[RMDB]
This 177-nucleotide RNA was probed chemically with 2A3. Values cover nucleotides 27 to 126.

RNA sequence: GGGAACGACUCGAGUAGAGUCGAAAAGCUGGUGGACGUGUCCUGUCGACGGCGGAAGAGUACGCAGCGGCUGGUUUUGGCGACGCUGGGAGCAUCGACGUUGCUGGGUGCGACGUCUGCGACAGGGUGCUACCCCGGCAUUCGUGCCGGGGUAGCAAAAAGAAACAACAACAACAAC
Reactivity to 2A3 in 0.01 (KOAc 150mM, MgCl2 10mM, bicine 150mM(pH8.5), 24C), signal-to-noise 1, nucleotides 027 to 126: g110c090u100g010g020u090g000g080a030c050g020u020g050u000c020c000u000g020u010c010g010a020c000g030g000c010g090g010a060a130g090a030g140u090a010c220g070c110a010g040c000g000g000c010u050g160g100u200u040u140u160g140g000c080g040a030c070g000c140u120g020g040g100a010g000c000a010u130c010g030a010c000g030u000u000g030c040u070g120g060g000u160g000c000g010a040c000g000u010c000u050g030c030g000a000c000a000g020g020g010